[RMDB]
RNA sequence: GGGAACGACUCGAGUAGAGUCGAAAAUGAAAAACUCUUGGCCAACUACAUCUUGCCACUUUUUGACGCGCUGACUAUGACAGACAACCUGAACAAGGUGUUUAAAAAGCUGAUCGACAGGGUCACCUGGUUUACUCGAAUUCGUUCGAGUAAACCAAAAAGAAACAACAACAACAAC
Reactivity to 2A3 in 0.01 (KOAc 150mM, MgCl2 10mM, bicine 150mM(pH8.5), 24C), signal-to-noise 4, nucleotides 027 to 126: u060g050a010a030a020a030a080c030u030c020u070u060g080g000c020c020a050a030c070u110a010c010a090u020c020u030u090g050c010c000a050c050u060u100u010u030u190g040a060c010g030c010g030c060u020g020a030c030u050a080u260g010a030c010a010g000a010c010a090a180c000c000u030g020a050a010c110a110a000g030g000u010g010u010u070u060a090a100a020a010a020g010c030u010g020a120u020c010g030a020c020a060g000g060g000u000c000a020c050c020
Reactivity to DMS in 0.01 (KOAc 150mM, MgCl2 10mM, bicine 150mM(pH8.5), 24C), signal-to-noise 3, nucleotides 027 to 126: u020g000a050a030a050a110a100c040u000c030u000u000g010g030c030c010a060a120c090u040a150c090a030u000c040u040u000g010c090c030a070c090u040u000u000u030u000g020a110c080g010c070g020c040u010g010a070c060u000a110u030g000a130c120a040g000a120c060a090a020c030c010u000g000a100a080c150a130a020g000g020u000g000u040u000u000a080a030a060a040a110g000c040u010g010a080u020c010g000a050c080a100g000g010g010u010c010a090c040c030
Description
The record gives the reactivity of an RNA of 177 nucleotides to 2A3 and DMS. For DMS, 4,400 sequencing reads were counted.